[RMDB]
RNA sequence: GGGAACGACUCGAGUAGAGUCGAAAAGCGUACUACAGCGGAUGAUGGGACAUGAGCUUGAUGAAAGCUAUCCCAAAUAGGAUAGCUAACCAAGCUCAACAGCCCAUCUGACGCUGUAUCGCAAAUCCAGCAUAUAAGUUCGCUUAUAUGCUGGAAAGAAUUGCCCUAUGUUCGCAUAGGGCAAUUCAAAAGAAACAACAACAACAAC
Reactivity to 2A3 in 0.01 (KOAc 150mM, MgCl2 10mM, bicine 150mM(pH8.5), 24C), signal-to-noise 3, nucleotides 027 to 156: g000c030g050u090a070c050u000a000c020a000g000c020g010g010a030u040g000a000u000g020g000g030a040c100a240u050g000a010g000c000u040u000g030a050u100g150a270a100a010g010c000u020a010u000c010c010c070a200a210a060u250a050g000g000a000u000a000g000c000u010a020a020c020c000a010a000g000c000u000c000a010a000c020a000g040c000c000c000a000u000c000u000g010a000c000g010c000u000g000u000a000u000c000g010c000a010a000a020u010c000c000a000g000c010a000u000a000u000a000a010g060u050u130c200g130c210u000u000a000u000a010u000g000c000u000g000g000a000a000a000
Reactivity to DMS in 0.01 (KOAc 150mM, MgCl2 10mM, bicine 150mM(pH8.5), 24C), signal-to-noise 1, nucleotides 027 to 156: g000c100g020u000a060c060u000a000c000a000g040c020g000g030a300u030g000a020u000g000g070g030a050c040a300u000g000a020g020c000u000u000g060a050u000g000a080a300a090g020c000u000a000u000c000c000c010a040a140a100u010a080g020g020a030u000a000g060c000u000a150a010c020c020a000a050g000c010u010c000a040a020c060a110g010c010c020c000a000u020c000u040g000a300c050g000c000u000g000u020a000u000c000g000c000a090a090a120u000c000c000a020g000c000a010u000a000u000a020a000g000u000u020c280g050c000u000u000a020u000a000u000g000c000u000g000g000a000a030a030
An RNA of 207 nucleotides, treated with 2A3 and DMS and read out base by base. The RNA was probed in 150 mM KOAc, 10 mM MgCl2 and 150 mM bicine (pH 8.5) at 24 C. The data come from the RNA Mapping Database (RMDB), library RNAMAK. 2A3 adducts were read by reverse transcription with SuperScript II with manganese. For 2A3, 3,987 sequencing reads were counted.